[RMDB]
Structure probing data (2A3 and DMS) for a 207-nucleotide construct.
The reactions ran in a buffer of 150 mM KOAc, 10 mM MgCl2 and 150 mM bicine (pH 8.5), at 24 C.
RNA sequence: GGGAACGACUCGAGUAGAGUCGAAAACAAUGCAGGAACUGGAGGCCAGGGAAUUGCUUCCCGAGGAUUUCCUGGCCCCUUCUGGUGCCUACUGCCUACACAUGGCACUGCUGAAGGACUCAGAGGCUGGGGUCUAACGGGACUGACAGAGGCAGUCACCUGCCUUUAGAUUCGUCUAAAGGCAGGUAAAAGAAACAACAACAACAAC
Reactivity to 2A3 in 0.01 (KOAc 150mM, MgCl2 10mM, bicine 150mM(pH8.5), 24C), signal-to-noise 5, nucleotides 027 to 156: c050a040a090u170g050c020a020g050g030a080a070c080u090g010g040a060g030g010c010c000a010g000g000g020a010a010u040u080g140c030u080u050c030c030c040g050a050g040g010a000u000u010u000c000c000u000g000g000c000c010c000c000u040u010c020u030g020g020u020g010c000c000u060a070c020u060g030c010c020u100a080c110a020c020a160u120g010g000c010a010c020u040g040c040u050g020a040a020g010g020a010c030u030c090a020g020a040g140g020c060u030g030g000g000g010u000c010u020a070a030c050g030g020g030a040c030u040g020a020c010a070g050a040g060g030c010a010g010u030c020
Reactivity to DMS in 0.01 (KOAc 150mM, MgCl2 10mM, bicine 150mM(pH8.5), 24C), signal-to-noise 2, nucleotides 027 to 156: c100a120a130u000g010c030a090g000g010a090a080c040u000g020g010a100g040g000c000c020a030g000g010g000a010a030u000u000g010c070u010u000c030c020c040g030a290g040g020a040u000u010u000c010c030u000g020g030c010c010c010c010u010u020c050u020g030g030u000g000c050c010u000a100c060u000g010c030c000u000a130c100a100c090a130u000g000g030c020a050c030u000g010c040u010g000a040a210g010g010a100c030u000c040a080g020a160g020g040c030u010g010g030g020g010u000c020u020a100a180c030g000g000g000a060c050u010g020a110c070a110g000a110g000g040c010a100g010u000c070
In probing experiments dimethyl sulfate is read out at A N1 and C N3, which are open when not base-paired.
The 2A3 profile rests on 4,921 reads.
Reactivities are given for positions 27 through 156.
For 2A3 the reverse transcriptase was SuperScript II with manganese.